Source information:
Chemical mapping of a 177-nucleotide RNA with DMS and 2A3. Values cover nucleotides 27 to 126. The reactions ran in a buffer of 150 mM KOAc, 10 mM MgCl2 and 150 mM bicine (pH 8.5), at 24 C. For 2A3, 5,518 sequencing reads were counted.
[RMDB]
RNA sequence: GGGAACGACUCGAGUAGAGUCGAAAACAUGACAUGCUAGUCCAUGAGCUAUGAUCAUGAUCACAUGCGCUAGACGACCAUGCGCUGCUACGUGGUACAUGAUCACUAGUGAUCCAGCAUCAUGGGACUCCUUCCUGUCAUUCGUGACAGGAAGGAGAAAAGAAACAACAACAACAAC
Reactivity to DMS in 0.01 (KOAc 150mM, MgCl2 10mM, bicine 150mM(pH8.5), 24C), signal-to-noise 3, nucleotides 027 to 126: c010a030u010g020a070c130a120u000g010c010u000a070g000u020c100c120a060u010g010a160g000c050u000a080u000g000a020u010c000a010u000g010a060u000c010a020c030a120u000g000c020g020c020u000a180g000a180c110g000a110c170c140a070u020g000c010g010c000u000g010c180u000a030c200g000u000g010g010u000a100c010a010u000g000a000u000c000a010c120u010a080g010u000g000a190u000c060c060a030g020c020a100u000c000a000u010g000g000g000a180
Reactivity to 2A3 in 0.01 (KOAc 150mM, MgCl2 10mM, bicine 150mM(pH8.5), 24C), signal-to-noise 3, nucleotides 027 to 126: c000a020u030g060a020c020a100u050g010c020u040a000g070u000c080c040a120u180g070a010g000c000u030a020u050g010a020u010c010a000u000g020a000u000c000a010c010a070u070g000c010g000c020u080a080g060a270c120g060a050c140c050a080u110g000c030g010c020u030g020c050u150a070c140g010u020g030g020u060a210c000a020u010g000a010u040c010a000c040u020a020g040u030g070a030u020c050c040a010g030c010a010u040c000a010u010g010g000g100a060